[RMDB]
RNA sequence: GGGAACGACUCGAGUAGAGUCGAAAACGUCGGUGGUUAUCGCUGCGGUGGGAGAAGGAAGGCACUGACCGCCGCUGACGGCGACCGUCUUUGCUGCCGGCGACCUGACGAGAUGACCUCACCGUUGGUCAUAGGGCCUAUUCGUAGGCCCUAUGACAAAAGAAACAACAACAACAAC
Reactivity to 2A3 in 0.01 (KOAc 150mM, MgCl2 10mM, bicine 150mM(pH8.5), 24C), signal-to-noise 5, nucleotides 027 to 126: c020g010u000c000g000g010u040g000g040u110u060a090u150c040g020c090u070g000c020g010g010u060g020g080g020a230g090a110a070g120g060a060a120g130g000c060a030c100u050g060a100c000c000g000c020c010g000c040u050g050a100c030g020g040c020g030a060c050c020g050u020c010u050u120u080g030c030u020g000c000c000g000g000c000g020a050c000c000u060g030a070c050g030a030g020a070u090g050a050c000c020u020c040a030c050c090g030u050u070g080
Reactivity to DMS in 0.01 (KOAc 150mM, MgCl2 10mM, bicine 150mM(pH8.5), 24C), signal-to-noise 1, nucleotides 027 to 126: c030g000u000c000g030g000u010g000g000u000u000a100u020c080g010c040u000g040c020g060g000u030g010g090g000a080g050a300a190g010g010a060a160g000g000c010a040c050u000g000a240c030c000g050c000c000g060c050u010g000a130c190g030g020c000g000a000c060c070g000u020c040u020u000u020g010c000u000g000c020c000g010g040c010g000a080c000c000u000g010a000c130g000a050g000a070u000g000a000c000c000u060c060a150c090c120g000u010u000g030
An RNA of 177 nucleotides, treated with 2A3 and DMS and read out base by base. For 2A3, 3,307 sequencing reads were counted. For DMS the reverse transcriptase was MarathonRT. In probing experiments dimethyl sulfate is read out at A N1 and C N3, which are open when not base-paired. The reactions ran in a buffer of 150 mM KOAc, 10 mM MgCl2 and 150 mM bicine (pH 8.5), at 24 C.